[RMDB]
RNA sequence: GGGAACGACUCGAGUAGAGUCGAAAAUGAGAUGUCGUCAGUAGUUCGACGUGAGCAGAAGCCCGCCUCGAUAUGCUAUGUGGACGAGGGCAUGCCCAAGACACACCUUAACCCUAGCGGGACGCAAUCACAAACACAGAUUCGUCUGUGUUUGUGAAAAAGAAACAACAACAACAAC
Reactivity to DMS in 0.01 (KOAc 150mM, MgCl2 10mM, bicine 150mM(pH8.5), 24C), signal-to-noise 5, nucleotides 027 to 126: u010g010a100g010a080u000g010u000c030g010u000c040a130g010u010a070g010u000u010c020g020a040c080g020u000g020a060g020c010a110g000a120a190g010c010c010c010g010c020c030u020c060g010a090u000a060u010g000c040u010a070u010g020u010g010g010a070c040g000a200g010g000g000c060a050u000g020c010c000c050a080a110g010a100c060a030c030a030c060c030u000u000a060a140c040c010c010u010a100g000c050g000g010g010a070c140g000c150a080a090
Reactivity to 2A3 in 0.01 (KOAc 150mM, MgCl2 10mM, bicine 150mM(pH8.5), 24C), signal-to-noise 5, nucleotides 027 to 126: u160g020a060g030a060u080g020u060c030g010u010c030a060g100u090a030g030u190u050c030g020a010c020g030u040g060a020g000c010a000g020a240a010g020c000c020c000g000c020c020u060c050g020a050u020a040u240g030c040u030a030u110g290u030g140g030a110c030g000a040g010g010g000c030a040u130g040c010c010c000a010a010g060a000c010a000c000a020c040c020u030u120a080a090c010c010c010u010a010g010c030g000g000g030a010c030g030c050a020a090